[RMDB]
RNA sequence: GGGAACGACUCGAGUAGAGUCGAAAAGAAAAGGGAGGAUCGGAUGGGAAGAGUAUAUCCCAUGGGAAUCCCUGGGUUCCCCUCGUGUCCAGCCCCUCCCCGGUCCGAUGGAAGGGGGACUCCGGGACAGUCAUAAUACGUUCGCGUAUUAUGACUGAAAAGAAACAACAACAACAAC
Reactivity to DMS in 0.01 (KOAc 150mM, MgCl2 10mM, bicine 150mM(pH8.5), 24C), signal-to-noise 2, nucleotides 027 to 126: g000a080a090a090a090g010g000g010a130g000g000a080u010c120g000g010a030u010g000g000g000a010a100g030a140g010u010a120u010a090u000c000c000c000a030u000g010g000g000a190a140u000c000c000c010u010g000g000g000u000u000c000c000c000c030u000c110g010u010g010u000c040c070a130g000c070c010c000c040u010c020c040c000c070g000g000u010c030c100g000a110u000g020g010a110a030g000g000g020g010g000a020c020u000c040c070g000g000g000a110
Reactivity to 2A3 in 0.01 (KOAc 150mM, MgCl2 10mM, bicine 150mM(pH8.5), 24C), signal-to-noise 1, nucleotides 027 to 126: g020a000a070a010a000g010g020g010a120g000g000a040u060c040g040g040a010u010g000g010g030a040a010g020a050g240u070a040u020a030u140c040c000c000a010u020g040g040g060a050a050u020c020c000c000u000g020g000g000u010u000c000c000c010c000u020c020g110u140g060u000c030c040a080g010c050c000c000c010u050c000c000c000c000g000g020u020c010c010g000a040u070g030g040a040a040g020g020g000g010g000a010c000u000c010c000g020g000g000a000
The record gives the reactivity of an RNA of 177 nucleotides to DMS and 2A3. For 2A3 the reverse transcriptase was SuperScript II with manganese. Values cover nucleotides 27 to 126.